[RMDB]
RNA sequence: GGGAACGACUCGAGUAGAGUCGAAAAGCUAACAAGACUAAAUGGUUAUUGGAAAUUGUCAACUACAAUGUCGAAAACCAACAGUAUGUUGCUGCUGGUGACUUGAGAGCAUUAGAUACUUUGACCACGCUGUAUACUGAUUCGUCAGUAUACAGCGAAAAGAAACAACAACAACAAC
Reactivity to 2A3 in 0.01 (KOAc 150mM, MgCl2 10mM, bicine 150mM(pH8.5), 24C), signal-to-noise 6, nucleotides 027 to 126: g030c040u070a070a030c040a140a050g080a100c030u140a070a110a160u100g020g010u040u030a060u080u080g060g040a050a120a070u050u060g060u070c020a030a010c020u110a080c050a020a040u100g030u040c020g120a080a080a040a030c010c000a000a020c000a010g020u080a070u280g300u200u240g020c010u000g000c010u010g000g040u030g020a020c030u030u040g050a060g010a010g070c010a010u040u050a030g040a100u080a110c030u020u030u050g020a010c000c010a030
Reactivity to DMS in 0.01 (KOAc 150mM, MgCl2 10mM, bicine 150mM(pH8.5), 24C), signal-to-noise 5, nucleotides 027 to 126: g010c060u000a070a100c130a060a090g020a100c060u000a080a110a150u000g000g020u000u010a070u000u010g010g000a070a100a070u000u000g010u000c080a090a070c130u000a090c030a010a020u000g010u010c020g010a060a070a130a050c010c000a010a030c070a010g010u000a080u010g010u010u010g020c010u000g010c030u000g010g010u000g000a030c020u010u000g010a070g000a040g000c040a060u000u000a060g010a100u000a070c050u000u000u000g010a100c010c040a120